[RMDB]
RNA sequence: GGGAACGACUCGAGUAGAGUCGAAAAGAAUGAAUUGGCUUAGUGCCGGAAAUUCCAUGAUUAAUACUGUCAACAGGAUAAGAAACCGUCGUAACGAAAUUCUAUUGAGACAAGCCCUUGUAACGGAAACACCUCGAAAUGUUGCCAACCCGCCAAGGGACGUAUUACUGUUCGCAGUAAUACGUCCAAAAGAAACAACAACAACAAC
Reactivity to 2A3 in 0.01 (KOAc 150mM, MgCl2 10mM, bicine 150mM(pH8.5), 24C), signal-to-noise 2, nucleotides 027 to 156: g050a040a080u120g000a000a060u080u100g000g000c050u100u100a110g040u090g130c060c020g000g020a040a050a030u040u000c060c000a030u050g040a010u150u090a100a100u100a190c090u120g010u060c000a030a040c020a160g020g000a020u040a110a090g050a140a080a020c050c010g030u120c050g050u090a010a060c050g020a080a030a020u170u060c090u060a090u110u230g060a080g050a050c020a000a020g000c010c010c010u050u030g070u070a080a030c030g000g030a070a020a000c050a030c030c020u010c010g020a080a070a050u110g000u030u040g010c030c000a000a060c020c000c010g000c020c020a010a010g040
Reactivity to DMS in 0.01 (KOAc 150mM, MgCl2 10mM, bicine 150mM(pH8.5), 24C), signal-to-noise 1, nucleotides 027 to 156: g000a100a090u000g010a140a080u000u000g020g030c000u020u000a140g110u010g000c000c030g020g010a090a120a090u000u000c000c040a130u000g020a180u000u000a050a130u000a050c030u010g000u010c050a100a060c060a070g060g000a130u020a130a140g000a040a110a110c000c060g050u010c060g000u000a060a160c030g000a100a130a070u000u010c020u010a050u010u000g000a100g000a090c060a080a060g000c030c000c030u000u020g040u000a100a080c010g000g000a160a110a140c080a050c060c060u010c040g000a050a070a110u010g010u010u000g020c010c090a110a180c010c000c040g040c060c090a040a190g000
The record gives the reactivity of an RNA of 207 nucleotides to 2A3 and DMS. For 2A3 the reverse transcriptase was SuperScript II with manganese.